Chemical mapping of a 207-nucleotide RNA with 2A3 and DMS. The data come from the RNA Mapping Database (RMDB), library OK3TST. Values cover nucleotides 27 to 156. The RNA was probed in 150 mM KOAc, 10 mM MgCl2 and 150 mM bicine (pH 8.5) at 24 C. For DMS the reverse transcriptase was MarathonRT. For DMS, 3,531 sequencing reads were counted.

RNA sequence: GGGAACGACUCGAGUAGAGUCGAAAACACUCAAAGCCAGUAAAGUAGCAUUGAUUGAAGUCUAUCAAGUGAAUAGUCCUCUUAUAUUGGAGUGACCAACUACAGACGAUUUCCUAUCUGUAUACUACCUUCAAAUGGGACAGUUCAAACAAUGAAAGUCUACACAAGUUUUCGAACUUGUGUAGACAAAAGAAACAACAACAACAAC
Reactivity to 2A3 in 0.01 (KOAc 150mM, MgCl2 10mM, bicine 150mM(pH8.5), 24C), signal-to-noise 4, nucleotides 027 to 156: c030a010c030u130c040a110a090a030g040c030c060a070g050u200a040a070a060g010u040a030g050c020a040u030u070g030a080u010u050g030a100a020g040u000c030u050a060u110c030a110a030g050u040g080a060a050u050a100g010u010c010c010u040c050u120u110a150u070a110u240u170g000g000a010g010u090g060a060c050c010a050a050c070u020a010c010a000g000a010c050g060a040u060u080u030c010c000u030a040u030c000u000g000u030a020u010a060c070u040a060c010c000u030u070c030a010a060a170u080g010g030g000a010c010a000g010u000u050c020a060a140a170c000a040a000u070g060a160a030a030
Reactivity to DMS in 0.01 (KOAc 150mM, MgCl2 10mM, bicine 150mM(pH8.5), 24C), signal-to-noise 2, nucleotides 027 to 156: c050a130c090u010c040a080a030a170g020c010c020a120g020u000a090a110a110g030u000a030g040c020a150u000u010g010a050u000u010g020a070a100g000u030c030u010a080u000c010a070a110g000u000g010a050a220u010a090g010u000c020c000u000c060u000u000a120u000a190u000u000g010g020a050g010u000g030a080c050c040a050a070c020u000a010c010a060g010a010c030g000a090u000u000u000c010c020u000a050u000c000u000g010u010a040u010a060c050u010a100c050c030u030u000c060a030a030a090u010g000g010g000a030c020a130g070u000u000c020a050a070a090c060a070a110u010g010a090a100a230